This 177-nucleotide RNA was probed chemically with DMS and 2A3. Values cover nucleotides 27 to 126. For DMS the reverse transcriptase was MarathonRT. Conditions: 150 mM KOAc, 10 mM MgCl2 and 150 mM bicine (pH 8.5), 24 C.
[RMDB]
RNA sequence: GGGAACGACUCGAGUAGAGUCGAAAAGAUAUGGAGUUUCUUGGUGAACGUUGAAAUCGGAAACGAUGGAGUUCCCAAGAGAACUCCUAAGUCAAAACAAUGUUGCCUCUUCGGAGGCAACAUUGAAUCGAUAAAAGUACUUCGGUACUUUUAUCGAAAAAGAAACAACAACAACAAC
Reactivity to DMS in 0.01 (KOAc 150mM, MgCl2 10mM, bicine 150mM(pH8.5), 24C), signal-to-noise 3, nucleotides 027 to 126: g010a070u010a300u010g010g000a030g010u000u000u000c000u000u010g000g010u020g020a010a020c010g010u000u010g010a070a100a020u000c000g000g000a120a110a200c010g000a010u000g000g000a090g020u000u000c000c000c000a000a000g000a040g010a010a010c010u000c010c010u000a000a080g020u010c050a100a100a100a220c010a010a000u000g010u000u000g000c010c000u000c000u000u000c220g030g010a010g000g010c000a010a000c000a000u000u000g010a080a140
Reactivity to 2A3 in 0.01 (KOAc 150mM, MgCl2 10mM, bicine 150mM(pH8.5), 24C), signal-to-noise 1, nucleotides 027 to 126: g030a020u090a070u210g020g010a010g020u030u020u010c000u020u050g030g050u300g050a020a000c060g070u290u080g030a050a030a000u000c010g000g040a100a030a040c000g000a000u010g000g030a020g040u000u000c000c030c000a000a010g030a010g000a010a010c000u000c000c000u000a070a020g050u030c050a030a050a000a150c010a020a000u010g000u000u000g000c000c010u000c050u070u090c300g160g010a020g040g000c000a000a000c010a000u000u000g010a010a020